[RMDB]
RNA sequence: GGGAACGACUCGAGUAGAGUCGAAAACAAAGGGGGUCAAGACCAAAUCUCUGUUCAUACACCAGAGCGUCCCCGAGACUAUCACACACCCUCCCGACCUCAUUGUGGUGAUCGGAGGAGGCCUAGGGCUCCAUGCCUAUUUCGAUAGGCAUGGAGCAAAAGAAACAACAACAACAAC
Reactivity to DMS in 0.01 (KOAc 150mM, MgCl2 10mM, bicine 150mM(pH8.5), 24C), signal-to-noise 2, nucleotides 027 to 126: c070a100a180a160g010g000g060g000g010u010c030a020a110g000a120c070c060a080a100a090u010c010u040c000u000g000u000u000c200a100u020a120c130a140c160c020a070g000a060g000c060g020u000c000c010c010c010g000a120g020a090c120u000a070u010c080a010c100a040c180a190c160c000c000u010c040c010c040g020a060c050c010u000c080a100u000u000g020u000g010g050u000g010a070u000c030g000g000a060g000g000a060g000g010c040c050u000a080g030g010
Reactivity to 2A3 in 0.01 (KOAc 150mM, MgCl2 10mM, bicine 150mM(pH8.5), 24C), signal-to-noise 1, nucleotides 027 to 126: c040a010a110a110g100g000g010g030g000u060c000a060a000g060a030c030c020a040a090a160u020c020u000c000u040g050u130u090c060a030u140a200c070a070c000c080a010g020a010g060c030g110u020c020c030c000c000g000a010g060a020c050u100a050u180c000a030c050a000c000a020c080c010c000u040c000c050c010g000a020c000c040u060c030a110u030u230g040u110g030g000u000g050a060u010c000g000g000a030g050g000a040g020g000c000c010u110a040g040g040
Notes
Chemical mapping of a 177-nucleotide RNA with DMS and 2A3. Source: RMDB library OK2TST, as collected in RNAgym. For DMS, 1,063 sequencing reads were counted. Conditions: 150 mM KOAc, 10 mM MgCl2 and 150 mM bicine (pH 8.5), 24 C.